[RMDB]
RNA sequence: GGGAACGACUCGAGUAGAGUCGAAAAACGCCUUCGGGCGUUAUUGAGGGGUCUAUGCCUCGAGGUUAGGACAUGAGCUGAAGCCUCCACGGCUCAACAGCCUAACUACCCACCGAGCGCAUAGACGGAGGCACCCGCCACGAUAGUUCGCUAUCAAUCGAUAUAUAAUUUUCGAAUUAUAUAUCGAAAAAGAAACAACAACAACAAC
Reactivity to 2A3 in 0.01 (KOAc 150mM, MgCl2 10mM, bicine 150mM(pH8.5), 24C), signal-to-noise 7, nucleotides 027 to 156: a000c010g010c010c000u060u080c290g110g000g000c020g020u040u010a070u060u160g130a140g010g080g070g000u000c000u010a000u000g000c000c000u000c010g010a060g010g010u020u010a000g020g020a080c110a280u250g010a030g000c000u020g020a080a000g030c010c000u000c010c020a020c020g000g000c000u010c010a040a080c060a070g150c000c000u000a000a010c010u050a100c090c120c000a050c060c000g000a010g000c140g000c050a000u000a000g000a000c000g000g000a000g000g010c010a020c010c020c010g070c070c050a140c110g010a000u010a020g050u110u080c180g030c110u030a010u060c000a030a100
Reactivity to DMS in 0.01 (KOAc 150mM, MgCl2 10mM, bicine 150mM(pH8.5), 24C), signal-to-noise 3, nucleotides 027 to 156: a010c020g010c010c000u000u010c300g050g020g040c010g000u000u000a010u000u000g000a090g000g000g030g020u000c020u000a050u000g020c020c000u000c000g010a120g010g020u010u000a020g040g010a090c080a300u010g000a070g050c000u000g000a070a180g020c010c000u000c020c030a300c120g030g000c020u010c010a040a090c060a140g000c000c000u000a010a010c030u000a040c020c010c040a300c060c010g000a060g010c110g000c000a030u000a050g000a020c030g010g010a050g020g000c020a120c020c030c030g020c030c030a090c060g010a090u000a040g010u000u010c090g030c030u000a120u000c020a160a300

Chemical mapping of a 207-nucleotide RNA with 2A3 and DMS. For 2A3, 9,747 sequencing reads were counted. The reactions ran in a buffer of 150 mM KOAc, 10 mM MgCl2 and 150 mM bicine (pH 8.5), at 24 C. Reactivities are given for positions 27 through 156.